[RMDB]
RNA sequence: GGGAACGACUCGAGUAGAGUCGAAAAGAUAUGGAAUGUCCUAAGGGAGCUGACAUUUCGGAAACGAAAUGCAGCGAGGAUCUUACAUGGACAUUCCUAAGUCAAAACUGAUGCUUCGGCAUCAGAAGAAUAAAUAUAUCUUCGGAUAUAUUUAUUCAAAAGAAACAACAACAACAAC
Reactivity to DMS in 0.01 (KOAc 150mM, MgCl2 10mM, bicine 150mM(pH8.5), 24C), signal-to-noise 3, nucleotides 027 to 126: g000a070u000a300u020g010g010a030a000u000g020u000c010c020u010a060a050g000g010g010a050g030c020u000g000a170c000a010u010u010u000c000g020g000a110a110a210c010g000a010a010a000u000g000c000a020g010c010g000a060g020g010a040u000c070u000u000a090c300a150u020g020g000a030c010a020u000u000c000c000u010a000a120g000u000c050a110a070a130a160c010u000g000a000u000g010c000u000u010c200g020g000c000a020u000c000a000g000a060a100
Reactivity to 2A3 in 0.01 (KOAc 150mM, MgCl2 10mM, bicine 150mM(pH8.5), 24C), signal-to-noise 2, nucleotides 027 to 126: g030a020u070a040u110g010g000a000a000u010g000u010c010c000u040a090a110g070g000g000a040g010c030u000g050a260c010a000u000u010u000c000g000g050a070a070a020c010g010a000a000a000u010g000c030a000g020c020g020a050g010g030a030u010c000u060u110a080c080a260u170g000g000a000c000a000u000u010c000c000u010a070a010g010u000c030a000a010a140a210c000u000g000a000u010g020c040u050u080c300g150g000c000a000u000c010a000g030a020a050

This 177-nucleotide RNA was probed chemically with DMS and 2A3. The RNA was probed in 150 mM KOAc, 10 mM MgCl2 and 150 mM bicine (pH 8.5) at 24 C. DMS adducts were read by reverse transcription with MarathonRT. The DMS profile rests on 2,741 reads.